[RMDB]
RNA sequence: GGGAACGACUCGAGUAGAGUCGAAAAUAAAAACCCUCGUGUGUAUAUAUGGGGAAAUGUAUACAUAAAGGAAAAUAUAACGCCCAAUUUUUCCCCAAGGAGAAGAAGAAAGAAAAUAUAAAGCGUGAUUAUUUAAGGUAUUCGUACCUUAGAUAAUAAAAGAAACAACAACAACAAC
Reactivity to 2A3 in 0.01 (KOAc 150mM, MgCl2 10mM, bicine 150mM(pH8.5), 24C), signal-to-noise 4, nucleotides 027 to 126: u100a000a110a040a070a060c000c020c000u010c040g080u060g000u000g000u010a000u000a010u000a000u070g020g000g000g000a000a020a010u020g000u000a010u000a020c010a000u040a030a130a070g030g040a050a090a200a040u170a040u050a070a040c050g030c010c000c000a000a020u070u030u000u010u010c010c000c010c010a010a050g100g070a070g030a110a030g030a050a020g060a040a170a010g110a050a120a060a000u170a040u030a040a080a000g040c020g030u030g100
Reactivity to DMS in 0.01 (KOAc 150mM, MgCl2 10mM, bicine 150mM(pH8.5), 24C), signal-to-noise 4, nucleotides 027 to 126: u020a060a140a140a150a120c060c000c010u010c060g020u010g000u010g000u000a000u000a010u000a020u030g000g000g010g010a030a030a050u020g000u010a020u000a000c000a020u000a050a110a110g000g000a080a090a090a090u010a080u010a160a080c260g000c000c030c020a070a060u030u010u010u000u010c000c010c000c010a090a080g030g010a110g010a060a040g000a030a050g010a030a050a050g000a090a030a070a060u010a080u010a060a080a100g010c070g000u020g000